Chemical mapping of a 207-nucleotide RNA with 2A3. Source: RMDB library M2RFPK, as collected in RNAgym. For 2A3, 251 sequencing reads were counted. 2A3 adducts were read by reverse transcription with SuperScript II with manganese.

RNA sequence: GGGAACGACUCGAGUAGAGUCGAAAACCAUUCCUUAUACCUUGAGUAUUGCUCAAUUCAGUUUAGCGUGCAUGCUCUUGGCUAUUCUCAUAGUGAUUGUCAAAUUUGGAGUUACUUAUUCGUCAAUAAAACACUACCACGUUCGCGUGGUAGUGAAGGUAUACGUGGUCUUCGGACCACGUAUACCAAAAGAAACAACAACAACAAC
Reactivity to 2A3 in 0.01 (KOAc 150mM, MgCl2 10mM, bicine 150mM(pH8.5), 24C), signal-to-noise 1, nucleotides 027 to 156: c030c000a080u030u020c050c000u300u300a110u090a100c000c000u000u000g030a000g060u000a090u300u000g010c050u060c060a160a160u300u160c020a130g130u030u070u260a130g000c080g030u000g050c000a000u020g000c000u000c000u000u000g000g010c000u000a000u120u020c030u000c020a250u240a120g100u020g140a030u000u140g300u050c000a000a080a300u150u300u090g050g000a060g000u100u000a020c080u130u190a020u210u130c030g140u090c160a030a300u240a020a020a000a000c000a000c000u000a000c000c000a000c000g000u010u030c240g030c000g190u000g000g030u000a000g000u000g000a000a000